The record gives the reactivity of an RNA of 177 nucleotides to 2A3 and DMS. The RNA was probed in 150 mM KOAc, 10 mM MgCl2 and 150 mM bicine (pH 8.5) at 24 C. Source: RMDB library OK2TRN, as collected in RNAgym.

RNA sequence: GGGAACGACUCGAGUAGAGUCGAAAACGGUGAUUACGAAUGCCUCUGUCCGAGCAAAUGGAAAGGCAAACGCUGCGAUAUCUAUGAUGCCAACUAUCCGGGAUGGAAUGGCGGUUCGGGAUCCGGACGCCUUUCCGUACUUCGGUACGGAAAGGCGAAAAGAAACAACAACAACAAC
Reactivity to 2A3 in 0.01 (KOAc 150mM, MgCl2 10mM, bicine 150mM(pH8.5), 24C), signal-to-noise 2, nucleotides 027 to 126: c000g120g030u100g050a090u090u170a000c010g000a000a000u050g020c000c010u060c070u080g040u000c010c030g070a040g010c040a060a050a160u110g000g050a040a120a100g030g000c000a010a100a040c110g060c100u120g000c030g100a100u030a050u190c050u030a100u140g100a060u160g060c030c010a060a050c110u080a100u090c070c120g120g030g020a010u030g020g010a090a030u050g000g010c000g040g010u040u040c010g000g010g040a040u000c010c020g000g030a030
Reactivity to DMS in 0.01 (KOAc 150mM, MgCl2 10mM, bicine 150mM(pH8.5), 24C), signal-to-noise 2, nucleotides 027 to 126: c070g000g000u000g000a230u030u000a080c000g040a030a060u000g000c030c000u000c080u000g010u000c020c030g000a070g000c190a080a090a100u010g040g000a030a140a150g000g000c000a020a100a110c110g020c070u010g000c110g000a100u000a120u000c050u010a080u010g000a150u020g020c040c060a050a180c100u000a030u000c090c090g010g010g000a060u000g020g000a050a020u000g010g030c030g010g030u000u000c000g000g020g020a090u020c040c010g000g030a220